[RMDB]
RNA sequence: GGGAACGACUCGAGUAGAGUCGAAAACACAGCGGAAUUCCAUCCCGAGGGGGAGUUAUUGCUUUCUUCUGGGUUCGAUAGGCAAAUCUGUGAGUAAAAUUUGGAAUAAAUGUGUGAUAAAGUCGUACAAUCAUGUUAGCUUCGGCUAACAUGAUUGAAAAGAAACAACAACAACAAC
Reactivity to 2A3 in 0.01 (KOAc 150mM, MgCl2 10mM, bicine 150mM(pH8.5), 24C), signal-to-noise 1, nucleotides 027 to 126: c000a010c000a000g080c040g120g000a060a010u040u030c010c010a010u000c000c010c000g080a020g020g030g000g000g000a050g000u000u080a210u250u300g030c000u020u060u100c000u080u000c010u030g010g010g050u110u020c070g070a080u070a050g120g000c070a000a000a190u020c040u040g070u040g100a030g010u100a050a060a030a070u110u130u090g000g010a030a000u070a040a190a060u090g000u000g020u030g020a020u090a110a050a010g090u050c060g040u150a020
Reactivity to DMS in 0.01 (KOAc 150mM, MgCl2 10mM, bicine 150mM(pH8.5), 24C), signal-to-noise 3, nucleotides 027 to 126: c070a040c040a050g000c120g020g010a160a110u000u000c020c020a090u000c030c000c010g010a070g020g010g000g010g000a090g000u020u020a100u010u010g010c020u000u000u000c020u000u010c040u000g020g010g030u010u000c090g000a080u010a060g000g020c090a080a120a080u000c010u010g000u010g020a110g020u000a030a040a080a100u000u010u010g020g000a060a050u000a050a090a090u000g010u010g020u000g010a120u000a060a100a080g020u000c060g000u010a140
Chemical mapping of a 177-nucleotide RNA with 2A3 and DMS. For 2A3 the reverse transcriptase was SuperScript II with manganese. Conditions: 150 mM KOAc, 10 mM MgCl2 and 150 mM bicine (pH 8.5), 24 C. Values cover nucleotides 27 to 126.